[RMDB]
RNA sequence: GGGAACGACUCGAGUAGAGUCGAAAAGAUAUGGACCCACUACCCACCUCCCGAGUGCGAAGAACUCGGAAACGAGGGAGCACGAGGGAGAGGUGGGUCCUAAGUCAAAGCGGCGUUCGCGCCGCAACAUAGCUGUAUAGUUCGCUAUACAGCUAUGAAAAGAAACAACAACAACAAC
Reactivity to 2A3 in 0.01 (KOAc 150mM, MgCl2 10mM, bicine 150mM(pH8.5), 24C), signal-to-noise 5, nucleotides 027 to 126: g090a060u220a210u300g000g000a010c000c020c010a010c010u180a260c020c010c020a030c010c000u000c000c000c000g010a020g020u010g010c030g130a300a050g020a080a050c000u000c000g030g000a030a010a010c010g000a000g000g020g000a010g000c000a000c010g010a020g020g000g000a000g000a000g000g010u000g000g000g000u000c000c000u000a010a020g080u030c060a050a080a100g000c000g000g000c010g020u070u160c220g010c010g010c090c000g000c000a010a000
Reactivity to DMS in 0.01 (KOAc 150mM, MgCl2 10mM, bicine 150mM(pH8.5), 24C), signal-to-noise 6, nucleotides 027 to 126: g010a100u000a160u000g020g000a010c010c000c000a020c000u000a120c020c000c020a300c060c000u000c010c000c000g000a250g010u000g010c000g010a080a180g010a100a140c010u000c000g000g000a030a070a090c000g010a030g000g000g000a080g010c000a010c010g000a300g000g000g010a010g000a010g010g000u000g000g000g000u000c000c000u000a030a090g010u000c120a080a060a090g010c010g000g000c010g010u000u000c120g010c020g000c010c010g010c020a030a060
An RNA of 177 nucleotides, treated with 2A3 and DMS and read out base by base. Values are in units of 0.01, from 0 to 300, in steps of 10. It was measured as part of the RMDB library TTRDEL. The 2A3 profile rests on 17,130 reads. For DMS, 7,670 sequencing reads were counted. Conditions: 150 mM KOAc, 10 mM MgCl2 and 150 mM bicine (pH 8.5), 24 C.